An RNA of 207 nucleotides, treated with 2A3 and read out base by base. 2A3 adducts were read by reverse transcription with SuperScript II with manganese. The RNA was probed in 150 mM KOAc, 10 mM MgCl2 and 150 mM bicine (pH 8.5) at 24 C. For 2A3, 1,582 sequencing reads were counted.

[RMDB]
RNA sequence: GGGAACGACUCGAGUAGAGUCGAAAAGGGUUUUCACCCUUCCUUUCUUCGGGUUUCCUUUCCUCAGCUGGCGGCCUCGCCCGGAGUCUUCUUCUCCAGCGCAGGUUCUGACGCGACCGGUGGCAUCACCGAGUUUCGCUCGAACCUCAAUCUCCUUACAUCCUGUAAUGUUCGCAUUACAGGAUGUAAAAGAAACAACAACAACAAC
Reactivity to 2A3 in 0.01 (KOAc 150mM, MgCl2 10mM, bicine 150mM(pH8.5), 24C), signal-to-noise 2, nucleotides 027 to 156: g090g040g010u060u080u200u270c190a130c000c000c010u030u020c030c000u040u080u040c030u050u050c020g030g000g000u010u100u040c050c000u070u060u090c040c030u060c000a020g020c030u060g060g000c040g010g060c030c060u070c070g020c000c000c040g070g010a020g000u020c020u100u030c020u070u010c040u100c000c010a040g040c060g030c130a010g000g000u030u000c060u200g020a010c110g000c000g010a000c000c010g000g000u010g010g080c120a230u300c010a300c000c010g010a070g090u090u120u020c010g010c020u010c010g000a000a000c000c000u020c000a000a030u010c050u010c030c000u010u000
The data come from the RNA Mapping Database (RMDB), library VIROID.